[RMDB]
RNA sequence: GGGAACGACUCGAGUAGAGUCGAAAACAGUCAACGUGAAGGCGGGCCAGACCAUCGCCGCAUUCUACCAGAGCACCGUCAUGAUCUUUGGCACGAUGGCUCGCUACAUUCAGAGAGUUAGGGAAAACAUGAGGCACUAUUUCGAUAGUGCCUCAUGAAAAGAAACAACAACAACAAC
Reactivity to DMS in 0.01 (KOAc 150mM, MgCl2 10mM, bicine 150mM(pH8.5), 24C), signal-to-noise 4, nucleotides 027 to 126: c090a140g010u010c080a050a120c160g020u010g010a080a070g000g000c020g020g020g000c010c020a060g020a180c110c060a050u000c090g010c040c050g010c080a050u000u010c050u000a120c020c030a050g000a040g020c130a040c040c020g000u010c120a060u020g010a050u010c020u000u010u000g010g020c040a040c100g000a110u000g000g000c010u000c030g020c010u000a050c070a120u010u000c070a100g010a120g000a100g000u010u000a060g010g000g010a060a050a120a140
Reactivity to 2A3 in 0.01 (KOAc 150mM, MgCl2 10mM, bicine 150mM(pH8.5), 24C), signal-to-noise 3, nucleotides 027 to 126: c030a010g190u110c060a030a030c050g040u070g090a100a020g030g000c000g020g010g070c020c020a020g060a110c010c020a090u050c050g020c020c050g060c010a010u100u050c020u080a100c000c030a060g000a010g050c040a050c080c010g100u140c040a070u140g080a050u040c030u050u030u060g030g000c040a010c090g070a050u010g000g010c010u010c010g000c010u040a030c010a110u040u100c050a030g040a000g010a010g070u050u120a090g060g030g000a010a080a010a020

Source: RMDB library OK2TRN, as collected in RNAgym. Chemical mapping of a 177-nucleotide RNA with DMS and 2A3. The RNA was probed in 150 mM KOAc, 10 mM MgCl2 and 150 mM bicine (pH 8.5) at 24 C. Reactivities are rounded to 0.1 and cut off at 0 and 3. For 2A3, 2,979 sequencing reads were counted. Values cover nucleotides 27 to 126.